[RMDB]
RNA sequence: GGGAACGACUCGAGUAGAGUCGAAAAGGCCAUCGUUUUUGCCAGACCAUUUUCGAUGGCCAUAGGUCUGGAUUAUAGUUCAAUCGCCGAGAGGCGUACAGUUAGAGUAGCGAGCUCGAAGCACGCGACCGGUAAGAGCUCGCGAAGGUCGCGGAGACCGCAUUAUUAUCUUCGGAUAAUAAUGCGGAAAAGAAACAACAACAACAAC
Reactivity to 2A3 in 0.01 (KOAc 150mM, MgCl2 10mM, bicine 150mM(pH8.5), 24C), signal-to-noise 2, nucleotides 027 to 156: g020g010c000c000a010u010c070g040u040u060u050u180u070g060c030c000a010g020a090c020c000a050u080u030u010u080c020g010a000u010g000g000c000c010a010u050a000g000g010u010c050u050g070g010a080u150u090a060u100a080g060u040u110c090a070a090u080c010g010c010c010g020a020g010a010g070g000c010g020u020a030c010a030g040u040u090a010g010a030g110u040a010g030c010g000a000g000c000u010c030g060a140a060g060c030a020c060g040c040g020a080c060c020g020g000u040a070a040g000a000g000c020u000c000g000c000g000a000a000g000g010u000c020g000c040g050g050a030g040a070
Reactivity to DMS in 0.01 (KOAc 150mM, MgCl2 10mM, bicine 150mM(pH8.5), 24C), signal-to-noise 2, nucleotides 027 to 156: g020g040c010c000a000u000c020g040u000u010u000u000u050g010c010c010a260g010a060c030c000a150u000u000u000u000c020g020a020u010g020g050c000c000a030u000a080g020g030u000c030u000g000g020a160u010u010a110u000a110g000u000u000c050a120a170u000c010g050c000c000g010a300g000a280g000g020c000g040u000a040c120a110g000u000u000a090g000a140g000u000a260g000c000g010a100g020c000u000c000g040a160a160g010c070a030c070g020c080g000a020c020c050g030g040u000a090a300g010a030g020c000u000c000g010c020g020a040a100g020g020u000c040g030c030g000g000a260g000a200
Chemical mapping of a 207-nucleotide RNA with 2A3 and DMS. Values are in units of 0.01, from 0 to 300, in steps of 10. 2A3 is a SHAPE reagent: it acylates the 2'-hydroxyl of flexible nucleotides of all four kinds. For 2A3, 1,252 sequencing reads were counted.